The record gives the reactivity of an RNA of 177 nucleotides to DMS and 2A3. For DMS, 1,961 sequencing reads were counted. The reactions ran in a buffer of 150 mM KOAc, 10 mM MgCl2 and 150 mM bicine (pH 8.5), at 24 C. For 2A3, 1,234 sequencing reads were counted.
RNA sequence: GGGAACGACUCGAGUAGAGUCGAAAAACGAGUUCUGAAAGGGGUUGUAGCUGGCUUUUCCAUCCUGUGGGAGGCAAGUGCUCGCCCUGCUCAAUCCACUCUACUACACCUGUGAACUAACUGUGGGCAAGGAAGAUAGCUUCGGCUAUCUUCCUUGAAAAGAAACAACAACAACAAC
Reactivity to DMS in 0.01 (KOAc 150mM, MgCl2 10mM, bicine 150mM(pH8.5), 24C), signal-to-noise 2, nucleotides 027 to 126: a140c100g000a060g010u020u010c080u010g000a050a060a240g010g010g000g020u000u030g040u020a030g040c020u000g000g010c030u010u000u000u000c000c030a050u010c210c150u010g000u010g010g000g000a020g000g010c010a050a100g010u020g010c020u000c000g000c010c000c000u010g000c260u010c010a050a150u000c080c130a060c030u000c010u010a070c090u000a100c070a110c030c020u000g000u000g010a070a060c180u010a050a070c170u000g020u000g000g000g020
Reactivity to 2A3 in 0.01 (KOAc 150mM, MgCl2 10mM, bicine 150mM(pH8.5), 24C), signal-to-noise 1, nucleotides 027 to 126: a000c060g010a030g030u150u060c070u220g120a070a080a010g000g030g010g020u140u140g040u190a000g000c020u010g050g000c030u210u100u080u030c010c000a010u140c110c110u300g010u040g010g000g030a000g020g000c020a160a240g050u000g070c000u000c050g010c010c010c000u010g000c000u010c010a020a020u040c020c000a020c010u000c000u050a040c020u000a030c000a060c040c010u070g020u090g140a040a030c010u000a020a030c020u080g010u130g100g040g000